[RMDB]
RNA sequence: GGGAACGACUCGAGUAGAGUCGAAAAGAGGCAACGAGUGCGCCUCAAAGGUAGGUACUGCCCAAUCUACCAGUACUCGAAAGAUCUCGGAAUGCCACAUAGAGAUCAAGGUAUUCCAGGGCAGAAAGGGAUCGAAGAUGUUCGCAUCUUCGAUCCCAAAAGAAACAACAACAACAAC
Reactivity to 2A3 in 0.01 (KOAc 150mM, MgCl2 10mM, bicine 150mM(pH8.5), 24C), signal-to-noise 1, nucleotides 027 to 126: g030a010g010g000c020a050a050c170g040a040g020u140g000c000g000c000c000u000c000a090a020a000g000g000u000a000g080g110u130a120c000u000g000c000c000c030a000a000u000c000u000a000c000c000a000g000u000a000c040u020c000g130a100a010a130g240a090u070c170u050c100g000g040a030a000u040g130c060c000a030c040a110u260a040g120a050g000a040u040c070a010a060g000g000u000a020u110u010c000c000a030g010g000g000c000a000g120a050a050a000
Annotation:
This 177-nucleotide RNA was probed chemically with 2A3. Conditions: 150 mM KOAc, 10 mM MgCl2 and 150 mM bicine (pH 8.5), 24 C. For 2A3 the reverse transcriptase was SuperScript II with manganese. It was measured as part of the RMDB library OK1LIB.